[RMDB]
RNA sequence: GGGAACGACUCGAGUAGAGUCGAAAAGGAGUGCUACCGAAAGGUAGCACUCCAACAAAUCGGUGUAAGUAGAGCCAGUCUUACACCGUGCGGCACAGCGGAAACGCUGAUGUCGUAUACACGGCUAAUACCUGGCAUUAUUCGUAAUGCCAGGUAUAAAAGAAACAACAACAACAAC
Reactivity to DMS in 0.01 (KOAc 150mM, MgCl2 10mM, bicine 150mM(pH8.5), 24C), signal-to-noise 3, nucleotides 027 to 126: g000g020a010g030u010g010c000u000a000c000c000g000a110a130a220g020g000u000a000g020c010a010c000u000c000c010a030a040c080a060a060a030u010c010g010g010u000g000u000a000a010g000u000a110g010a030g000c000c010a180g020u020c000u000u010a010c000a020c000c010g010u000g010c010g000g020c000a010c000a020g000c010g010g000a140a130a200c010g010c010u000g010a040u000g030u000c000g000u000a040u000a110c240a100c150g010g000c010u000a120
Reactivity to 2A3 in 0.01 (KOAc 150mM, MgCl2 10mM, bicine 150mM(pH8.5), 24C), signal-to-noise 1, nucleotides 027 to 126: g020g030a010g020u010g000c010u000a010c000c010g080a100a060a070g010g000u020a010g000c000a000c000u000c000c000a010a000c000a000a000a010u040c020g000g000u000g010u000a010a040g000u030a050g030a030g110c030c010a040g080u040c010u000u000a000c000a000c000c010g000u000g000c000g020g000c000a000c000a010g010c000g010g030a080a050a000c020g000c000u000g010a040u000g000u000c000g000u000a000u020a000c090a000c020g000g020c010u010a020